[RMDB]
Annotation: The record gives the reactivity of an RNA of 207 nucleotides to 2A3. The data come from the RNA Mapping Database (RMDB), library M2RFOK. The 2A3 profile rests on 1,009 reads.
RNA sequence: GGGAACGACUCGAGUAGAGUCGAAAAGAAAGAAAGAAAGUUCAUUGUUUAUCGGGAACUUUAAACUAUAACCAUUCAAACUUUUCCAGAAGUUAGUUUGAAUAGAAAUUAAAAAGAAACUUCUGAAUGACCUUGGCACCGUUCGCGGUGCCAAGAAGCUAUAACUGUUGUUCGCAACAGUUAUAGCAAAAGAAACAACAACAACAAC
Reactivity to 2A3 in 0.01 (KOAc 150mM, MgCl2 10mM, bicine 150mM(pH8.5), 24C), signal-to-noise 1, nucleotides 027 to 156: g020a000a040a010g070a010a090a010g110a000a040a050g020u040u020c070a130u100u190g100u210u290u160a150u200c070g080g070g010a000a000c000u040u030u000a130a110a000c030u030a000u050a170a020c000c000a000u000u010c000a000a010a010c000u030u030u000u000c060c000a010g000a020a000g010u000u000a000g010u000u000u010g010a000a000u050a180g010a000a090a010u190u200a050a060a000a000a000g000a000a000a000c000u000u000c000u000g030a010a040u040g040a020c020c020u000u000g000g020c000a000c020c020g040u040u050c000g030c020g140g020u000g000c000c030a030a000g000a000a000